[RMDB]
RNA sequence: GGGAACGACUCGAGUAGAGUCGAAAAGAAAGCUCCUCAACCGUGUGGAGGAGAAUGGCUAUAACCACAGAAACCUGAGGAAACAGGAAGCCACAACGGAAGCCAUGUGGUUAGCACACGGAAGAAACGAGCUGAUUUAUUUCGAUAAAUCAGCUCGAAAAGAAACAACAACAACAAC
Reactivity to 2A3 in 0.01 (KOAc 150mM, MgCl2 10mM, bicine 150mM(pH8.5), 24C), signal-to-noise 5, nucleotides 027 to 126: g130a010a060a000g020c010u020c020c000u030c020a150a260c050c000g010u000g000u010g020g030a010g000g000a000g010a020a000u070g020g000c020u030a000u040a250a080c000c010a050c010a050g100a050a080a010c030c010u040g050a100g010g300a060a070a070c000a020g000g030a020a000g010c000c000a040c020a120a140c080g160g020a110a030g050c010c020a060u060g010u010g000g000u030u070a030g040c000a010c000a000c000g010g030a010a010g040a010a070a020
Reactivity to DMS in 0.01 (KOAc 150mM, MgCl2 10mM, bicine 150mM(pH8.5), 24C), signal-to-noise 3, nucleotides 027 to 126: g010a080a150a090g000c010u010c010c010u010c000a100a120c000c000g070u000g020u000g010g010a000g000g000a010g000a020a030u000g000g030c100u020a160u020a100a090c000c000a070c120a060g000a090a100a110c010c000u000g000a160g000g010a090a080a100c000a020g020g000a290a060g000c010c010a100c130a080a080c130g000g060a220a040g020c070c130a110u000g030u010g010g020u000u010a020g000c010a000c030a000c010g000g000a240a060g010a050a130a210

Chemical mapping of a 177-nucleotide RNA with 2A3 and DMS. The data come from the RNA Mapping Database (RMDB), library OK1LIB. The 2A3 profile rests on 4,443 reads. The reactions ran in a buffer of 150 mM KOAc, 10 mM MgCl2 and 150 mM bicine (pH 8.5), at 24 C. 2A3 adducts were read by reverse transcription with SuperScript II with manganese.